[RMDB]
RNA sequence: GGGAACGACUCGAGUAGAGUCGAAAAUAUAUGGCCAACAGAAUGCUUAUCAGCCCGCAAUCGAUCUCGUUUUGCCGAAAAACGUCGCACGGCUGCUGCUCCCGUGUCUGCAUUCGGCUGAUGUUAAAAUAUGCGGCUAGUUCGCUAGCCGCAUAUUAAAAGAAACAACAACAACAAC
Reactivity to 2A3 in 0.01 (KOAc 150mM, MgCl2 10mM, bicine 150mM(pH8.5), 24C), signal-to-noise 2, nucleotides 027 to 126: u210a000u080a030u100g050g020c000c010a010a000c030a050g130a200a140u100g010c020u090u070a020u160c010a010g000c010c000c000g050c050a050a060u040c040g030a000u040c060u020c100g020u010u060u120u110g020c080c050g020a070a000a000a010a080c060g060u060c040g050c000a010c000g000g000c070u090g010c010u000g000c050u030c000c040c000g010u030g020u000c050u060g030c000a030u010u010c030g000g000c000u000g040a040u050g030u170u100a000a020
Reactivity to DMS in 0.01 (KOAc 150mM, MgCl2 10mM, bicine 150mM(pH8.5), 24C), signal-to-noise 2, nucleotides 027 to 126: u050a120u040a080u040g000g050c030c060a060a040c100a070g020a130a080u000g010c000u030u040a020u010c100a030g010c030c020c020g000c040a050a050u030c050g000a070u000c050u000c020g030u000u000u020u030g000c020c030g010a130a010a100a050a110c080g040u020c150g000c120a030c040g000g010c060u000g000c000u000g000c030u010c080c000c020g000u000g000u100c040u030g000c040a110u000u020c060g020g010c000u000g000a080u030g000u030u000a080a140
Overview
Structure probing data (2A3 and DMS) for a 177-nucleotide construct. For DMS the reverse transcriptase was MarathonRT. Values cover nucleotides 27 to 126. The DMS profile rests on 2,785 reads. High 2A3 reactivity points to a flexible backbone, as in loops and unpaired stretches. For 2A3, 1,187 sequencing reads were counted. It was measured as part of the RMDB library OK1LIB.